Source: RMDB library OK1LIB, as collected in RNAgym. An RNA of 177 nucleotides, treated with 2A3 and DMS and read out base by base. The RNA was probed in 150 mM KOAc, 10 mM MgCl2 and 150 mM bicine (pH 8.5) at 24 C.
RNA sequence: GGGAACGACUCGAGUAGAGUCGAAAAGUCACGUGGUACGCCACGUGACAACCGGAAACGGAGAUGACGAUCGGGCGCAUCUGUAGAAAUACUAAACGCCAAAGCGAGGAGUUACGACUCCUCGCAACAUAAUGGCACCCUUCGGGGUGCCAUUAUGAAAAGAAACAACAACAACAAC
Reactivity to 2A3 in 0.01 (KOAc 150mM, MgCl2 10mM, bicine 150mM(pH8.5), 24C), signal-to-noise 3, nucleotides 027 to 126: g000u000c000a000c000g000u000g000g020u070a050c300g040c010c000a000c000g020u000g000a000c010a010a000c000c000g030g030a000a120a010c080g030g020a100g000a040u100g050a040c030g110a100u150c070g040g030g000c000g010c020a050u010c080u040g020u020a010g090a030a100a010u060a040c030u060a000a140a010c050g030c030c050a120a010a000g000c000g010a000g000g000a000g000u040u110a090c230g040a040c030u000c000c000u000c000g010c000a000a010
Reactivity to DMS in 0.01 (KOAc 150mM, MgCl2 10mM, bicine 150mM(pH8.5), 24C), signal-to-noise 2, nucleotides 027 to 126: g010u000c000a000c020g000u000g010g010u000a180c300g020c020c000a000c000g100u010g000a000c010a010a030c000c030g010g020a060a030a120c050g000g020a060g000a060u020g010a090c190g000a160u090c080g010g000g000c010g040c060a210u000c250u010g020u000a020g000a080a040a080u000a030c000u020a020a110a220c020g000c050c000a050a070a210g050c000g000a000g000g000a020g000u020u030a110c180g040a040c000u000c000c000u000c000g000c020a010a020